This 177-nucleotide RNA was probed chemically with DMS. The RNA was probed in 150 mM KOAc, 10 mM MgCl2 and 150 mM bicine (pH 8.5) at 24 C.
[RMDB]
RNA sequence: GGGAACGACUCGAGUAGAGUCGAAAAUGGUAGUCAGCUUCAGGGGCAAAAUUCCAUGGCUAUUUUAUCCAACUGUUGGUCAAAUUUUCUUGGGAGCAACCAUGCCAGAUCCCAGUCAUACACUGGACUGAUCAGCACUAUUCGUAGUGCUGAUCAGAAAAGAAACAACAACAACAAC
Reactivity to DMS in 0.01 (KOAc 150mM, MgCl2 10mM, bicine 150mM(pH8.5), 24C), signal-to-noise 1, nucleotides 027 to 126: u000g000g050u000a040g020u000c130a140g010c070u000u000c040a060g000g000g030g040c120a060a080a070a080u000u020c020c080a080u000g000g020c020u000a030u000u000u000u010a040u030c120c110a070a130c180u000g000u000u000g000g000u000c040a070a030a140u000u010u000u000c020u010u000g010g010g020a060g000c070a110a110c070c080a050u000g030c040c040a070g000a180u010c090c000c000a060g000u000c170a060u010a090c200a070c030u000g010g000a300